An RNA of 177 nucleotides, treated with 2A3 and read out base by base. It was measured as part of the RMDB library RFM100. High 2A3 reactivity points to a flexible backbone, as in loops and unpaired stretches.
[RMDB]
RNA sequence: GGGAACGACUCGAGUAGAGUCGAAAACUCAUCAACAUCUAAAACUUUUAUUUUGGUUAUUUCUUCAUACGACAAAGUGAUAGUAACAUUAUUCACAAAAUUGACAUAACUCUUAUCUGGUUUUAUAGUAAUUUGAGUCGUUCGCGACUCAAAUUACAAAAGAAACAACAACAACAAC
Reactivity to 2A3 in 0.01 (KOAc 150mM, MgCl2 10mM, bicine 150mM(pH8.5), 24C), signal-to-noise 2, nucleotides 027 to 126: c000u030c010a010u090c040a020a190c010a120u070c110u090a000a000a010a060c030u110u090u000u180a210u030u120u050u050g020g000u060u000a020u000u050u020c020u100u080c100a120u020a080c070g060a080c190a040a110a060g010u010g000a040u010a030g170u070a090a010c010a040u080u190a060u130u130c010a010c100a040a070a040a080u190u110g000a010c030a020u100a000a010c030u020c050u200u080a050u000c010u030g020g040u000u000u000u000a190u040a000
Values are in units of 0.01, from 0 to 300, in steps of 10. Reactivities are given for positions 27 through 126.